[RMDB]
RNA sequence: GGGAACGACUCGAGUAGAGUCGAAAAGGGCACGAAGCCCCCACCGGGCGCUCCCCUCGGCAGACCGCCCAUUGGGUUCACACCCCCAGGCCGCGGGCCGGCUGUUCUUCUUUCUCUUUCGUCGUCAAUAGCUGCAGCUUCGGCUGCAGCAAAAGAAACAACAACAACAAC
Reactivity to 2A3 in 0.01 (KOAc 150mM, MgCl2 10mM, bicine 150mM(pH8.5), 24C), signal-to-noise 3, nucleotides 027 to 129: g000g000g000c040a040c190g150a130a010g000c010c000c010c010c000a040c000c050g030g000g000c050g010c000u030c000c000c000c020u040c040g010g000c020a020g020a300c030c010g000c010c000c000a060u080u220g030g000g000u170u180c080a080c020a060c070c030c000c010c000a000g040g010c030c060g000c030g000g020g000c020c000g000g000c020u010g020u040u040c000u080u040c010u000u080u000c000u000c000u020u110u070c010g020u010c030g020u000c020a040a030u070a060
Reactivity to DMS in 0.01 (KOAc 150mM, MgCl2 10mM, bicine 150mM(pH8.5), 24C), signal-to-noise 3, nucleotides 027 to 129: g000g100g000c000a060c150g030a160a160g010c040c000c060c020c060a050c070c070g040g080g000c080g040c100u000c050c010c020c060u030c090g010g030c080a000g000a180c090c030g020c020c000c030a000u020u060g030g070g020u030u030c070a130c140a300c140c040c010c060c040a130g000g040c030c020g030c000g020g020g060c070c000g010g020c020u070g000u000u070c000u000u000c020u000u020u090c010u000c040u020u050u010c000g000u020c110g040u020c030a030a110u060a060